[RMDB]
RNA sequence: GGGAACGACUCGAGUAGAGUCGAAAAGAUAUGGAGCUCGGUUCGCUUGGAUUUAUCUCCAGGCUGAGUAUAUCGGAAACGAUAUACGAAAGCCUGGAGAUUGUCAGCGAACCCGGCUCCUAAGUCACCUUACAAUGAACUUCGGUUCAUUGUAAGGAAAAGAAACAACAACAACAAC
Reactivity to DMS in 0.01 (KOAc 150mM, MgCl2 10mM, bicine 150mM(pH8.5), 24C), signal-to-noise 2, nucleotides 027 to 126: g000a030u000a300u000g010g000a010g020c010u000c300g000g000u010u000c030g020c020u000u030g010g010a040u020u000u000a000u000c000u000c020c000a020g000g030c010u000g000a300g010u000a020u000a000u000c000g010g000a130a140a200c000g010a020u010a010u000a000c000g000a100a070a030g010c010c000u010g000g020a000g010a000u000u000g010u000c000a020g000c000g020a000a020c000c000c080g000g000c000u000c010c000u000a020a080g000u000c040a200